Structure probing data (DMS and 2A3) for a 177-nucleotide construct. DMS adducts were read by reverse transcription with MarathonRT. For DMS, 1,546 sequencing reads were counted. The reactions ran in a buffer of 150 mM KOAc, 10 mM MgCl2 and 150 mM bicine (pH 8.5), at 24 C. It was measured as part of the RMDB library OK1LIB. For 2A3 the reverse transcriptase was SuperScript II with manganese.
[RMDB]
RNA sequence: GGGAACGACUCGAGUAGAGUCGAAAAGAAAGCGCGAGGCUGCGAAGCAGUCGAGUCGUAUGAGGCCGGAAAUGCGACGAGCGCGAAAGUCCAAGAUGCUGAAACCGGCCUAAAAGCAUCGGACGAAGGGUAAUUCCAUGUUCGCAUGGAAUUACCCAAAAGAAACAACAACAACAAC
Reactivity to DMS in 0.01 (KOAc 150mM, MgCl2 10mM, bicine 150mM(pH8.5), 24C), signal-to-noise 1, nucleotides 027 to 126: g010a130a060a100g000c000g060c000g040a160g010g000c000u000g030c030g010a250a020g040c000a000g010u000c000g000a090g010u000c050g010u000a010u000g070a020g000g000c000c000g000g000a060a190a120u000g000c030g040a000c000g000a130g000c110g000c000g010a040a040a070g000u000c000c000a090a130g000a020u000g000c000u000g000a160a170a100c000c060g000g000c000c000u010a000a110a080a030g000c000a040u000c030g040g000a030c060g000a090a280
Reactivity to 2A3 in 0.01 (KOAc 150mM, MgCl2 10mM, bicine 150mM(pH8.5), 24C), signal-to-noise 1, nucleotides 027 to 126: g080a020a070a010g040c030g000c010g050a060g000g000c000u000g000c100g260a220a000g030c000a000g030u000c050g030a020g030u000c000g000u040a180u250g140a080g000g000c030c000g000g010a020a000a300u220g020c000g010a030c000g010a060g020c000g000c000g060a140a020a000g040u000c000c000a030a180g000a040u000g020c000u030g060a000a010a020c020c010g030g020c000c000u000a000a000a000a000g000c000a000u000c000g010g010a010c000g030a000a080